An RNA of 177 nucleotides, treated with DMS and 2A3 and read out base by base. The reactions ran in a buffer of 150 mM KOAc, 10 mM MgCl2 and 150 mM bicine (pH 8.5), at 24 C. It was measured as part of the RMDB library OK2TRN. The 2A3 profile rests on 1,451 reads. For DMS the reverse transcriptase was MarathonRT.
RNA sequence: GGGAACGACUCGAGUAGAGUCGAAAAGGCCGAGCGCCAACCCAGGGAGGGAAUAUAUACAAGGGGCGAUUUAAGGUGCAAGUAUGUAUAGGGAAGUGAAGAAGCGCCGAAAACUUCACACGGCCGAAAUUAUGAUGGGAUUCGUCCCAUCAUAAUUAAAAGAAACAACAACAACAAC
Reactivity to DMS in 0.01 (KOAc 150mM, MgCl2 10mM, bicine 150mM(pH8.5), 24C), signal-to-noise 4, nucleotides 027 to 126: g010g020c010c010g040a140g020c110g020c050c050a080a100c040c010c020a180g020g000g000a080g010g010g000a140a050u010a060u010a080u010a090c120a070a130g000g010g020g020c070g010a080u010u000u020a110a090g010g000u000g010c060a070a150g010u000a040u000g010u000a050u020a120g000g010g010a060a110g040u000g000a050a060g010a090a100g010c090g010c040c040g000a040a050a070a060c030u000u000c040a050c060a160c060g010g000c010c020g020a040
Reactivity to 2A3 in 0.01 (KOAc 150mM, MgCl2 10mM, bicine 150mM(pH8.5), 24C), signal-to-noise 2, nucleotides 027 to 126: g040g000c040c070g070a100g010c130g020c020c030a010a030c050c000c030a010g000g050g050a120g020g020g020a050a010u120a010u030a010u020a190c040a110a000g030g000g100g000c010g010a010u040u180u190a120a040g010g020u040g000c010a040a030g050u060a060u160g110u000a030u010a040g070g070g010a120a020g020u030g040a030a030g060a070a010g050c060g030c020c030g010a020a070a000a030c010u020u030c000a060c010a020c070g030g030c000c010g030a060